Chemical mapping of a 177-nucleotide RNA with 2A3.
2A3 is a SHAPE reagent: it acylates the 2'-hydroxyl of flexible nucleotides of all four kinds.
The RNA was probed in 150 mM KOAc, 10 mM MgCl2 and 150 mM bicine (pH 8.5) at 24 C.
It was measured as part of the RMDB library RFM100.
RNA sequence: GGGAACGACUCGAGUAGAGUCGAAAACUUCAAAUGCAGCUUGGCUGUGACACACAGUGGGAAAAAGCAGGACUAACCCUGCCAGGUCCUAGAAGCUUUCAGAUUCAUCGCAUAGAAUUUGAUACAUCCGACCGUGUGAUUUCGAUCACACGGUCGGAAAAGAAACAACAACAACAAC
Reactivity to 2A3 in 0.01 (KOAc 150mM, MgCl2 10mM, bicine 150mM(pH8.5), 24C), signal-to-noise 1, nucleotides 027 to 126: c010u140u060c030a040a040a040u150g020c010a000g030c050u010u050g290g040c000u000g060u000g040a070c000a000c000a000c000a230g000u110g000g000g000a010a060a010a000a010g020c000a000g000g000a000c070u110a070a070c000c000c000u000g000c000c030a230g200g000u100c000c000u030a110g010a090a000g180c000u000u250u020c000a000g000a000u000u000c000a000u010c200g000c120a070u140a300g000a040a000u000u000u000g000a000u000a200c110a030u000